[RMDB]
RNA sequence: GGGAACGACUCGAGUAGAGUCGAAAAUGAAAGAAAAUCCGUCCAAGCCGCGGACGUUAAACUGUGGCACGGUUGUGCCUAGGUGCAACCCUGCUACUAAUGGCGGUACCCCUGCCCAAAUAAAAAAACUAGGUAUAUUGUUCGCAAUAUACCUAGUAAAAGAAACAACAACAACAAC
Reactivity to 2A3 in 0.01 (KOAc 150mM, MgCl2 10mM, bicine 150mM(pH8.5), 24C), signal-to-noise 2, nucleotides 027 to 126: u080g010a040a020a080g120a020a160a000a080u070c030c010g000u020c010c000a060a050g010c010c010g020c010g010g010a000c010g000u000u010a020a030a040c080u060g000u000g000g000c010a010c000g020g010u010u010g000u020g020c040c040u080a210g000g110u010g000c000a010a000c000c000c000u000g050c000u000a000c010u030a110a160u170g050g000c000g000g000u080a110c000c000c000c010u040g070c030c010c030a070a130a040u220a070a130a020a010a010a010
Reactivity to DMS in 0.01 (KOAc 150mM, MgCl2 10mM, bicine 150mM(pH8.5), 24C), signal-to-noise 3, nucleotides 027 to 126: u000g020a070a090a120g000a060a090a120a180u010c060c010g000u000c010c010a110a110g000c020c010g020c010g000g010a000c010g000u000u040a000a020a020c150u010g010u000g000g000c000a000c300g000g000u000u000g020u000g000c020c010u020a120g030g020u000g000c020a020a020c010c010c040u010g010c010u000a010c010u000a050a080u010g000g010c010g010g010u010a300c040c010c000c000u000g010c010c010c010a090a100a140u030a030a010a060a060a060a080

Chemical mapping of a 177-nucleotide RNA with 2A3 and DMS. The DMS profile rests on 2,898 reads. For 2A3, 3,613 sequencing reads were counted. DMS adducts were read by reverse transcription with MarathonRT.